[RMDB]
RNA sequence: GGGAACGACUCGAGUAGAGUCGAAAACUCGUCUGUUCGCAGACGAGAAAACAGCGGGAAACCUCUCCCCACCGAGAGGCAGCUAUCUGGAAGGAUAGACUAUAAAAGCCAAUGGUUCGCCAUUGGCGUAGUUAAUCAACUUCGGUUGAUUAACUACAAAAGAAACAACAACAACAAC
Reactivity to DMS in 0.01 (KOAc 150mM, MgCl2 10mM, bicine 150mM(pH8.5), 24C), signal-to-noise 5, nucleotides 027 to 126: c000u000c000g020u000c000u000g010u010u020c240g040c010a010g010a020c010g000a020g000a040a030a080a130c130a080g010c120g000g000g000a150a050a060c010c010u000c000u000c010c010c030c100a100c180c170g000a020g020a010g000g010c070a070g010c010u000a010u000c000u000g000g060a300a120g000g000a010u000a010g010a150c180u010a140u010a040a070a100a180g010c000c000a000a010u000g000g010u010u010c200g020c010c000a000u000u000g000g010c010
Reactivity to 2A3 in 0.01 (KOAc 150mM, MgCl2 10mM, bicine 150mM(pH8.5), 24C), signal-to-noise 5, nucleotides 027 to 126: c000u000c010g010u000c000u010g040u040u090c200g020c100a000g000a010c000g000a000g000a020a030a000a010c030a020g110c120g020g010g030a050a140a060c010c010u000c010u010c010c020c020c020a070c040c060g010a010g000a000g010g000c000a020g120c000u000a000u000c000u020g030g040a030a010g020g000a000u010a020g020a000c010u110a100u080a180a130a060a010g010c000c000a000a010u010g020g050u030u070c190g030c060c000a000u000u000g000g000c000